[RMDB]
RNA sequence: GGGAACGACUCGAGUAGAGUCGAAAAGAUAUGGACGGAGGUACUACCCACCUCGAAUCGGAAACGAUCCGAGAGGUACUCCGUCCUAAGUCAAAGAAGAUGUGCAACUUCGGUUGCACAUCUUCAAGUUACUUUGAGCGUUCGCGCUCAAAGUAACAAAAGAAACAACAACAACAAC
Reactivity to DMS in 0.01 (KOAc 150mM, MgCl2 10mM, bicine 150mM(pH8.5), 24C), signal-to-noise 2, nucleotides 027 to 126: g000a060u010a130u010g000g000a010c010g020g010a000g030g020u000a070c150u000a090c040c030c030a300c150c000u010c000g000a030a010u000c000g010g000a110a050a170c010g000a000u000c040c000g000a030g000a010g000g000u000a030c000u000c000c000g000u000c000c040u000a010a050g010u010c100a140a190a130g000a010a000g010a010u000g030u010g020c000a010a010c010u000u020c160g030g000u000u000g000c000a000c000a000u000c000u000u000c000a020a060
An RNA of 177 nucleotides, treated with DMS and read out base by base. The DMS profile rests on 1,175 reads. DMS adducts were read by reverse transcription with MarathonRT. The reactions ran in a buffer of 150 mM KOAc, 10 mM MgCl2 and 150 mM bicine (pH 8.5), at 24 C.